[RMDB]
RNA sequence: GGGAACGACUCGAGUAGAGUCGAAAAACAUUUGAGCAGAGUGGCUGCAGUGAGAUGGACAAAGACAAAAGUGGUAGAAGAGAGCAGAGAUGUAGUUGGGGAAUCAGAUUGUCUAGGGUCUUGAAGGCAGUCAAGAAUUUGGGCUUUCAUUUAGUCAGAUUACGACAUCAUUCGUGAUGUCGUAAUCAAAAGAAACAACAACAACAAC
Reactivity to 2A3 in 0.01 (KOAc 150mM, MgCl2 10mM, bicine 150mM(pH8.5), 24C), signal-to-noise 3, nucleotides 027 to 156: a000c050a080u130u080u190g050a020g020c020a000g030a020g050u040g030g000c030u030g010c020a020g030u020g110a110g010a060u110g020g010a040c050a060a120a010g040a010c040a010a090a040a020g050u040g060g030u060a030g020a110a020g030a010g010a010g000c030a020g010a000g010a020u040g050u070a060g020u070u060g010g000g000g020a010a020u070c010a020g040a090u030u040g000u020c010u040a030g080g000g000u010c030u010u050g020a030a010g030g000c030a000g020u040c040a020a020g040a060a040u090u070u050g030g010g000c000u040u070u070c060a080u110u130u060a030g050u060c060a000
Reactivity to DMS in 0.01 (KOAc 150mM, MgCl2 10mM, bicine 150mM(pH8.5), 24C), signal-to-noise 2, nucleotides 027 to 156: a090c060a140u010u000u000g010a130g050c050a050g020a130g000u000g020g010c020u010g010c020a110g010u000g010a090g030a140u010g020g020a150c040a080a070a100g040a100c050a050a060a070a090g010u000g030g010u000a070g020a060a070g010a070g020a120g040c010a120g000a070g000a060u000g050u000a050g030u000u000g020g000g010g000a080a110u000c030a080g000a060u000u000g030u000c030u000a050g020g010g020u010c050u000u000g010a050a070g000g000c050a050g040u000c030a040a090g000a050a120u000u000u000g000g000g000c020u000u000u020c030a080u010u010u010a090g020u010c020a130
Source information: Structure probing data (2A3 and DMS) for a 207-nucleotide construct. The reactions ran in a buffer of 150 mM KOAc, 10 mM MgCl2 and 150 mM bicine (pH 8.5), at 24 C. Source: RMDB library OK3TST, as collected in RNAgym.